Record summary: The data come from the RNA Mapping Database (RMDB), library RFM100. Chemical mapping of a 177-nucleotide RNA with 2A3 and DMS. DMS adducts were read by reverse transcription with MarathonRT. High 2A3 reactivity points to a flexible backbone, as in loops and unpaired stretches. 2A3 adducts were read by reverse transcription with SuperScript II with manganese. For 2A3, 761 sequencing reads were counted. For DMS, 1,065 sequencing reads were counted.
RNA sequence: GGGAACGACUCGAGUAGAGUCGAAAAUGAGACUGACAGGUCGAGCAGGGACGAAAGUCGGGACUAGUGAUCCGGCACCGGCAAGUGGAAGCGGUGUCGCUCAACGGAUAAAAGGUACCCCGGGGAUGUGGAUGAAGAACUUCGGUUCUUCAUCCACAAAAGAAACAACAACAACAAC
Reactivity to 2A3 in 0.01 (KOAc 150mM, MgCl2 10mM, bicine 150mM(pH8.5), 24C), signal-to-noise 1, nucleotides 027 to 126: u190g030a000g010a020c040u100g000a000c050a000g000g000u030c060g060a030g000c040a000g000g000g000a030c020g030a100a070a000g070u010c010g000g000g010a100c060u050a050g060u010g080a020u000c000c010g000g000c020a010c000c000g150g030c130a230a040g040u190g090g020a010a060g000c000g000g000u030g000u000c020g000c000u030c010a030a000c060g000g010a030u050a090a040a010a000g110g030u190a250c030c030c040c030g020g020g020g020a100u040
Reactivity to DMS in 0.01 (KOAc 150mM, MgCl2 10mM, bicine 150mM(pH8.5), 24C), signal-to-noise 1, nucleotides 027 to 126: u010g010a090g000a050c030u000g000a150c160a060g010g000u000c020g000a260g000c040a000g000g040g000a000c140g000a120a090a140g030u060c000g000g000g000a120c030u060a210g000u000g050a160u000c290c000g000g000c040a040c030c000g000g000c030a200a150g020u120g030g030a180a160g030c000g030g000u030g000u000c000g020c160u000c000a060a070c120g030g000a000u000a090a090a130a110g000g030u000a060c000c000c020c000g000g000g020g000a030u000